[RMDB]
RNA sequence: GGGAACGACUCGAGUAGAGUCGAAAAUCAAGGAAUUUGCAUUUAAACGAAUCUGGCAAGUUUAUAGAAGAAGCUAAUCAAGCUCGUCGACAGGCCAGAUUGGAGGAUCUCAAAAAAAGAAUAGCUUUACACUCGCAUAAGGCAGGGAUUGAAGAUACGUAUAUCAGUGCUUCGGCACUGAUAUACGAAAAGAAACAACAACAACAAC
Reactivity to 2A3 in 0.01 (KOAc 150mM, MgCl2 10mM, bicine 150mM(pH8.5), 24C), signal-to-noise 2, nucleotides 027 to 156: u080c020a010a000g060g000a090a030u100u070u030g000c030a030u050u170u260a140a060a010c060g020a040a000u010c000u010g000g000c040a090a140g060u040u110u150a290u170a060g070a090a060g020a130a000g030c020u100a100a030u140c030a080a040g000c000u010c060g120u050c050g030a030c000a030g080g080c000c000a000g000a000u000u000g000g010a010g060g000a030u050c040u060c210a120a060a000a010a040a000a000g050a010a040u120a060g000c010u090u060u070a060c080a020c120u070c120g000c050a020u080a120a020g050g000c030a000g050g000g060a030u090u130g030a020a020g060a130u160a060
Reactivity to DMS in 0.01 (KOAc 150mM, MgCl2 10mM, bicine 150mM(pH8.5), 24C), signal-to-noise 1, nucleotides 027 to 156: u000c010a100a140g010g000a020a070u000u010u000g000c020a090u000u000u000a180a050a170c040g040a060a060u010c020u000g020g060c020a060a050g000u000u000u000a190u000a100g010a070a030g000a150a170g070c010u000a070a050u010c290a100a140g030c000u000c010g000u010c000g000a020c070a130g000g000c000c070a020g020a090u010u000g010g040a090g000g020a130u000c040u000c030a030a030a070a110a070a040a080g030a010a080u000a070g000c040u000u010u010a090c100a040c100u010c090g000c030a140u000a070a040g000g040c010a090g080g010g010a060u000u000g020a010a010g000a130u010a080

This 207-nucleotide RNA was probed chemically with 2A3 and DMS. Source: RMDB library OK3TST, as collected in RNAgym. DMS (dimethyl sulfate) methylates the pairing face of unpaired adenines and cytosines. As a SHAPE reagent, 2A3 marks flexible, mostly unpaired nucleotides at the ribose 2'-OH. The DMS profile rests on 1,474 reads.